[RMDB]
RNA sequence: GGGAACGACUCGAGUAGAGUCGAAAACAGCUGUGUGUGCUUGUGCAGUCACGUAGGUGACCUCUGGCAAAACAAUUCAGACAUAGCUGCUUCUUUUUUAUAUAGCCGGAGCGCGAGUCAACAGACAAUACGCGCAGGAUUUCGAUCCUGCGCGUAUAAAAGAAACAACAACAACAAC
Reactivity to DMS in 0.01 (KOAc 150mM, MgCl2 10mM, bicine 150mM(pH8.5), 24C), signal-to-noise 1, nucleotides 027 to 126: c050a000g000c000u000g070u000g000u090g010u000g040c300u010u000g070u000g030c240a060g000u000c000a000c030g000u100a030g000g020u000g000a000c000c150u000c160u110g000g020c080a110a070a090a300c150a030a060u050u050c130a000g000a010c050a000u000a000g000c030u020g000c090u000u000c000u000u000u010u070u080u030a050u010a020u000a170g040c040c040g150g030a010g020c000g000c000g000a200g000u000c030a000a020c090a140g000a020c000a090
Reactivity to 2A3 in 0.01 (KOAc 150mM, MgCl2 10mM, bicine 150mM(pH8.5), 24C), signal-to-noise 2, nucleotides 027 to 126: c010a000g000c000u000g000u000g020u010g050u050g050c000u020u070g050u000g150c150a020g010u000c020a000c070g130u250a030g220g030u000g000a010c030c010u040c020u050g040g040c050a040a040a040a060c030a070a070u150u110c030a040g110a130c000a060u040a000g040c030u000g000c000u060u000c000u000u100u130u000u090u000a160u000a100u060a000g030c040c020g130g000a120g040c040g000c010g030a000g000u000c050a110a130c020a090g140a010c030a130